[RMDB]
RNA sequence: GGGAACGACUCGAGUAGAGUCGAAAAGAAUCACCGUACCUAUUUACGUUUACGCUCCAAGAUCGGUGGAUAGCAGCCCUAUCAAUAUCUAGGAGAACUGUGCUAUGUUUAGAAGAUUAGGUAGUCUAUUACACAGCCAUGUUCGCAUGGCUGUGAAGUGUUAUCAUCAGUUCGCUGAUGAUAACACAAAAGAAACAACAACAACAAC
Reactivity to 2A3 in 0.01 (KOAc 150mM, MgCl2 10mM, bicine 150mM(pH8.5), 24C), signal-to-noise 3, nucleotides 027 to 156: g070a040a050u120c040a040c060c010g020u050a070c010c010u060a050u130u160u080a060c060g020u020u110u040a030c050g020c010u050c010c000a040a070g000a030u070c090g030g130u040g110g060a060u060a050g030c090a010g010c010c000c000u000a020u020c020a040a080u030a010u170c010u040a050g030g000a020g040a060a050c080u120g010u030g090c040u060a020u090g090u060u060u060a130g010a180a060g010a080u040u050a020g020g030u030a080g050u010c020u040a120u060u130a080c020a000c000a000g000c000c000a000u010g000u050u040c110g000c080a000u000g000g000c000u000g000u000g000a010a000
Reactivity to DMS in 0.01 (KOAc 150mM, MgCl2 10mM, bicine 150mM(pH8.5), 24C), signal-to-noise 2, nucleotides 027 to 156: g020a180a110u000c020a260c040c000g010u010a080c030c010u000a060u020u010u000a060c090g010u000u000u000a060c080g000c020u000c020c020a070a150g030a050u000c050g010g010u000g010g020a100u000a060g020c070a170g000c100c080c000u000a170u010c040a060a110u000a090u010c070u040a060g010g000a070g010a030a090c050u010g000u000g010c030u010a050u010g010u000u010u000a050g010a100a160g000a070u000u000a090g040g010u000a110g010u010c040u000a110u010u000a200c000a030c000a030g000c000c000a030u000g030u000u010c300g000c030a040u010g000g000c010u000g000u000g010a010a070
Overview:
An RNA of 207 nucleotides, treated with 2A3 and DMS and read out base by base. For DMS the reverse transcriptase was MarathonRT. The 2A3 profile rests on 2,176 reads. For 2A3 the reverse transcriptase was SuperScript II with manganese.